[RMDB]
The data come from the RNA Mapping Database (RMDB), library M2RFPK. An RNA of 207 nucleotides, treated with DMS and 2A3 and read out base by base. For 2A3 the reverse transcriptase was SuperScript II with manganese. The RNA was probed in 150 mM KOAc, 10 mM MgCl2 and 150 mM bicine (pH 8.5) at 24 C.
RNA sequence: GGGAACGACUCGAGUAGAGUCGAAAAAUAGGCUCUCCAACCCAACUCCUAGUCAAUACGUCCUCGUCGUACAGAACGGUAACAUGUUUUCCGAACAUCCGCGCUUGGGUAUACGAGUAUACACCUUACAGCACCACUUACUUCGGUAAGUGGUGAAUCUAUAAGUCGUGUUCGCACGACUUAUAGAAAAAGAAACAACAACAACAAC
Reactivity to DMS in 0.01 (KOAc 150mM, MgCl2 10mM, bicine 150mM(pH8.5), 24C), signal-to-noise 2, nucleotides 027 to 156: a150u000a050g010g020c030u000c030u000c020c030a070a120c000c010c020a120a100c040u000c020c010u000a080g020u000c050a130a130u000a050c060g030u010c000c010u030c010g000u000c060g020u010a090c060a080g000a080a120c020g010g000u010a030a080c090a120u010g000u000u010u020u000c110c050g000a080a080c040a040u010c030c020g010c050g000c040u000u000g020g010g030u000a060u000a030c040g000a150g020u010a090u010a080c050a070c030c020u000u000a080c100a170g000c000a030c000c010a010c000u010u000a040c010u000u000c220g000g040u000a010a010g020u000g010g000u000g000a000a050
Reactivity to 2A3 in 0.01 (KOAc 150mM, MgCl2 10mM, bicine 150mM(pH8.5), 24C), signal-to-noise 4, nucleotides 027 to 156: a000u140a050g010g000c000u000c000u010c040c000a080a070c010c000c000a020a020c040u030c020c020u050a030g030u060c040a040a090u070a100c050g020u020c010c020u010c020g050u000c020g020u040a040c040a100g040a110a020c020g010g020u070a090a020c040a080u090g030u040u030u060u060c040c030g040a030a020c020a070u020c020c030g030c000g010c070u050u050g050g010g020u040a040u000a060c040g010a010g060u030a030u030a060c090a090c020c000u090u100a090c070a090g030c010a020c000c000a000c000u000u000a000c000u000u030c050g070g010u010a000a000g000u010g000g000u000g000a000a000